[RMDB]
RNA sequence: GGGAACGACUCGAGUAGAGUCGAAAAGCGACACGCUGUCUAUACUUCAAGAAACGUGUCCACAUUUCUGGACACAGUGUUGUACCUUCGUAGCCAUGCCAGGCCCCCAAACCUACGAACUCCGCUGGAAGCCGGACGCAAUCUCAAAACUCCUACGAAUCUCUUACUGGUUCGCCAGUAAGAGAUUAAAAGAAACAACAACAACAAC
Reactivity to DMS in 0.01 (KOAc 150mM, MgCl2 10mM, bicine 150mM(pH8.5), 24C), signal-to-noise 1, nucleotides 027 to 156: g070c030g030a110c060a020c000g010c010u030g050u000c030u000a130u000a100c020u020u000c080a120a170g000a120a080a060c060g010u000g020u000c030c010a020c040a140u000u000u010c010u000g000g010a040c020a040c030a100g000u010g000u000u000g010u040a060c010c020u010u000c000g030u000a130g010c040c000a070u000g040c000c000a050g010g020c000c000c020c080c000a020a070a090c060c000u010a060c070g000a080a100c020u000c030c030g000c080u000g040g010a110a130g000c030c070g000g000a110c040g000c060a090a150u000c010u000c010a020a060a050a050c120u000c020c010u010a070c050g000
Reactivity to 2A3 in 0.01 (KOAc 150mM, MgCl2 10mM, bicine 150mM(pH8.5), 24C), signal-to-noise 1, nucleotides 027 to 156: g080c040g010a000c010a010c030g040c020u050g040u010c050u120a160u090a150c050u110u080c070a050a110g030a100a170a020c050g010u010g020u040c050c020a080c020a040u170u240u140c120u050g000g000a010c010a000c020a050g000u020g030u050u050g020u040a070c000c030u060u110c030g100u050a030g000c000c100a050u050g110c050c030a050g050g060c010c020c000c000c050a060a070a090c000c010u080a030c030g010a040a050c010u030c050c000g000c020u000g020g020a070a000g030c020c000g000g000a000c040g020c020a010a000u030c020u000c100a040a000a000a100c000u020c010c000u010a060c030g010
Source: RMDB library OK3TST, as collected in RNAgym. Structure probing data (DMS and 2A3) for a 207-nucleotide construct. For DMS, 2,180 sequencing reads were counted. DMS adducts were read by reverse transcription with MarathonRT. The reactions ran in a buffer of 150 mM KOAc, 10 mM MgCl2 and 150 mM bicine (pH 8.5), at 24 C.